Notes: The record gives the reactivity of an RNA of 177 nucleotides to DMS and 2A3. The data come from the RNA Mapping Database (RMDB), library TTRDES.
RNA sequence: GGGAACGACUCGAGUAGAGUCGAAAAGAUAUGGACCGUAUACAGCGACGAUCUUGACUGUCGGAAACGACAGCAAGGGAGCUGUACGGUCCUAAGUCAAAACUUUUAGCACUUCGGUGCUAAAAGAGAUAUAGGCCUACUUCGGUAGGCCUAUAUCAAAAGAAACAACAACAACAAC
Reactivity to DMS in 0.01 (KOAc 150mM, MgCl2 10mM, bicine 150mM(pH8.5), 24C), signal-to-noise 3, nucleotides 027 to 126: g000a030u000a060u010g000g000a020c000c000g000u000a090u010a140c080a010g010c000g020a090c300g010a000u000c000u000u000g000a190c000u000g020u020c000g000g010a010a000a030c000g020a010c000a000g000c010a010a000g000g000g000a000g020c000u000g000u010a000c000g010g010u000c000c000u000a010a070g000u000c000a130a090a110a260c000u000u000u000u000a010g000c000a010c000u010u010c260g030g010u000g000c000u010a000a000a010a000g010a090
Reactivity to 2A3 in 0.01 (KOAc 150mM, MgCl2 10mM, bicine 150mM(pH8.5), 24C), signal-to-noise 4, nucleotides 027 to 126: g000a000u010a010u070g000g000a000c000c010g020u030a110u080a130c040a010g050c010g290a300c030g010a300u010c020u050u110g290a300c010u010g000u010c000g010g020a020a010a000c010g000a000c000a000g010c000a000a000g000g000g010a010g000c000u010g000u000a000c000g000g000u010c000c000u000a000a000g000u000c010a000a030a090a190c000u000u000u000u000a010g000c000a000c010u050u040c300g170g000u010g000c000u000a010a000a000a000g010a000
Conditions: 150 mM KOAc, 10 mM MgCl2 and 150 mM bicine (pH 8.5), 24 C. For DMS the reverse transcriptase was MarathonRT. Values cover nucleotides 27 to 126. Reactivities are rounded to 0.1 and cut off at 0 and 3. The 2A3 profile rests on 10,850 reads.